[RMDB]
RNA sequence: GGGAACGACUCGAGUAGAGUCGAAAAAGAACGUUAACACACAGAAGACAAAAGCAACCCAUGCCAUGGAAGAGGAUCUUUGGUAUUUUGAACUUCUUGGCGAUUUCGCUUGUAUACGACAAACACAUAUCAGAGAUUAGACAGCUUGGUCGCGGGAAAAUUACGACGGAUUCGUCCGUCGUAAUUUAAAAGAAACAACAACAACAAC
Reactivity to 2A3 in 0.01 (KOAc 150mM, MgCl2 10mM, bicine 150mM(pH8.5), 24C), signal-to-noise 2, nucleotides 027 to 156: a010g070a100a000c080g030u070u090a200a040c080a030c010a010c030a100g040a100a030g080a060c060a080a090a040a020g040c040a040a050c000c000c000a030u070g000c000c030a010u060g040g030a090a010g040a080g080g050a030u030c000u000u010u070g000g010u010a060u030u060u020u050g060a050a040c010u020u020c000u080u110g070g000c040g140a170u020u170u170c040g010c020u100u080g040u080a100u040a070c060g010a020c090a020a130a010c050a000c020a050u070a010u020c020a000g010a010g000a080u010u050a030g050a070c010a030g030c030u010u040g010g010u050c020g000c000g000g020g030a100
Reactivity to DMS in 0.01 (KOAc 150mM, MgCl2 10mM, bicine 150mM(pH8.5), 24C), signal-to-noise 1, nucleotides 027 to 156: a070g050a060a080c060g030u000u000a060a150c070a080c000a190c050a170g010a080a050g000a170c080a040a080a060a050g000c050a040a240c050c020c020a180u010g000c010c000a070u000g010g000a060a130g000a100g040g010a050u000c010u010u010u010g020g000u010a070u000u040u030u000g000a030a080c030u000u000c080u000u000g010g030c000g020a220u010u010u010c100g020c000u010u000g020u000a100u000a060c020g000a200c020a060a030a060c200a050c170a080u010a020u000c010a030g010a050g000a080u010u010a110g000a100c060a070g010c030u000u000g000g050u000c030g000c100g000g000g000a050